[RMDB]
RNA sequence: GGGAACGACUCGAGUAGAGUCGAAAAUGAUGACCGCUGGUUGAAGACCGCUGGUAUUUCGGACGAGCAGUGGAAAGGCAUUAAGUCCCUCAUCCGUGAGUCAGUGACUCGUGGUCCAGACGGGAAGAUUCGGUCGCUCGUUCGCGAGCGACCGAAUAAAAGAAACAACAACAACAAC
Reactivity to 2A3 in 0.01 (KOAc 150mM, MgCl2 10mM, bicine 150mM(pH8.5), 24C), signal-to-noise 1, nucleotides 027 to 126: u210g000a100u160g050a020c000c000g000c070u030g000g280u000u000g140a160a160g000a000c020c000g000c140u130g040g010u050a300u090u000u020c020g140g000a000c000g000a030g230c210a100g010u040g020g240a000a260a300g100g000c110a000u000u280a120a050g290u300c000c000c010u000c000a020u000c000c000g000u000g000a000g000u000c110a000g000u020g160a000c000u030c000g000u000g000g070u070c050c000a000g030a170c220g000g020g020a140a140g060